The data come from the RNA Mapping Database (RMDB), library OK2TST. Structure probing data (2A3 and DMS) for a 177-nucleotide construct. The 2A3 profile rests on 13,642 reads. The RNA was probed in 150 mM KOAc, 10 mM MgCl2 and 150 mM bicine (pH 8.5) at 24 C.

RNA sequence: GGGAACGACUCGAGUAGAGUCGAAAAGGUCGUUGGCGGGACAAGAUCGCGACGCCGACCAGAUCCGGUUCCACCGGAGUCACAUAAGCCUCACCCCAACGGGACCAAUGCACUUCGACGAAGUCCGCAAGCAUUAAAAGUUCGCUUUUAAUGCUUGAAAAGAAACAACAACAACAAC
Reactivity to 2A3 in 0.01 (KOAc 150mM, MgCl2 10mM, bicine 150mM(pH8.5), 24C), signal-to-noise 6, nucleotides 027 to 126: g020g010u070c020g010u050u050g040g020c020g030g060g010a030c040a080a080g110a300u130c070g000c020g140a040c010g020c000c010g010a010c010c010a020g010a060u010c020c000g020g010u160u120c080c070a060c000c020g040g000a030g090u110c030a030c010a150u150a100a050g020c000c020u020c030a080c020c000c000c010a010a050c030g030g000g000a010c000c030a030a020u070g020c050a030c070u070u060c080g070a070c040g040a100a020g030u000c000c000g020
Reactivity to DMS in 0.01 (KOAc 150mM, MgCl2 10mM, bicine 150mM(pH8.5), 24C), signal-to-noise 9, nucleotides 027 to 126: g000g010u000c040g020u010u010g010g010c030g010g010g020a210c050a130a130g010a300u010c080g010c020g010a300c030g000c060c010g010a040c020c120a140g010a160u000c020c030g000g010u000u010c130c090a150c050c020g010g000a030g010u000c070a090c120a070u010a080a120g000c030c010u000c060a160c070c010c010c050a070a120c120g000g000g000a050c030c060a060a090u010g010c090a050c060u000u000c050g000a100c060g000a120a120g010u000c030c050g010